[RMDB]
RNA sequence: GGGAACGACUCGAGUAGAGUCGAAAAGACAUCCUGUGAAUACUGUAUUUUUGAUUUGCAUUUGAUUGAAAAAAUUGUGUAUGUAAGUGGACCCAUGUUGUUCAAGGGUCAACUGUAUACAUAUGAACAAGUACUACUGUUUCGACAGUAGUACUUGAAAAGAAACAACAACAACAAC
Reactivity to 2A3 in 0.01 (KOAc 150mM, MgCl2 10mM, bicine 150mM(pH8.5), 24C), signal-to-noise 9, nucleotides 027 to 126: g090a020c030a090u070c000c010u040g020u040g070a050a050u150a190c040u050g080u230a280u080u120u030u060u090g090a090u030u030u090g040c050a090u040u050u210g120a160u090u150g110a080a030a020a020a040a110u130u060g010u000g000u000a000u010g030u040a090a130g000u000g020g000a010c010c000c010a060u120g100u120u090g130u140u190c070a100a080g000g000g000u010c000a000a000c000u000g010u010a020u000a010c000a000u040a070u070g020a030a020
Reactivity to DMS in 0.01 (KOAc 150mM, MgCl2 10mM, bicine 150mM(pH8.5), 24C), signal-to-noise 9, nucleotides 027 to 126: g010a160c200a090u010c010c030u000g020u010g000a090a060u010a070c100u010g010u010a030u010u000u000u020u010g000a070u010u000u010g010c070a070u010u010u010g010a080u010u010g000a000a040a060a060a070a100u010u000g010u000g000u000a000u000g010u010a060a030g010u000g000g000a020c000c000c000a130u010g010u000u010g010u010u010c080a040a120g010g000g010u000c010a000a000c000u000g000u010a020u000a010c010a010u000a030u010g010a090a140

The record gives the reactivity of an RNA of 177 nucleotides to 2A3 and DMS. As a SHAPE reagent, 2A3 marks flexible, mostly unpaired nucleotides at the ribose 2'-OH. The data come from the RNA Mapping Database (RMDB), libraries RFM100 and RFMREP. Conditions: 150 mM KOAc, 10 mM MgCl2 and 150 mM bicine (pH 8.5), 24 C. For DMS the reverse transcriptase was MarathonRT.